The data come from the RNA Mapping Database (RMDB), library OK1LIB. This 177-nucleotide RNA was probed chemically with 2A3 and DMS. DMS adducts were read by reverse transcription with MarathonRT. For 2A3 the reverse transcriptase was SuperScript II with manganese. As a SHAPE reagent, 2A3 marks flexible, mostly unpaired nucleotides at the ribose 2'-OH. The DMS profile rests on 2,376 reads.
[RMDB]
RNA sequence: GGGAACGACUCGAGUAGAGUCGAAAAUACGAAUUCAGCACAGAAGCAUGAUAUACGGUCGUGUGUUGCGUGAUUAGUAGCGGUAGCAAGAUGCAACCACGACGAGAUGCACGUAACAUUGAGUUCACUGGGCCCUGCUAUUCGUAGCAGGGUCCAGAAAAGAAACAACAACAACAAC
Reactivity to 2A3 in 0.01 (KOAc 150mM, MgCl2 10mM, bicine 150mM(pH8.5), 24C), signal-to-noise 2, nucleotides 027 to 126: u180a050c100g010a000a020u070u040c000a010g020c070a080c000a070g190a290a040g070c050a060u050g060a040u100a100u120a240c010g110g000u000c000g000u000g020u020g010u000u010g000c000g030u010g050a260u090u080a030g080u070a010g000c010g000g060u050a000g000c000a000a020g010a000u000g000c000a020a020c000c000a000c000g000a000c010g000a020g000a000u010g030c030a000c070g060u110a060a000c000a110u110u000g000a000g040u000u040c000a010
Reactivity to DMS in 0.01 (KOAc 150mM, MgCl2 10mM, bicine 150mM(pH8.5), 24C), signal-to-noise 2, nucleotides 027 to 126: u000a090c000g010a030a000u000u020c030a090g000c220a090c080a080g000a080a240g000c010a000u000g000a070u000a100u010a150c250g000g000u030c010g000u000g020u020g050u000u000g030c010g000u000g000a130u020u010a220g010u050a100g000c060g010g030u010a100g010c060a060a130g000a070u000g070c000a000a000c020c000a000c040g050a020c000g020a040g040a030u000g030c000a180c090g020u000a050a060c200a090u000u020g000a010g000u000u000c010a230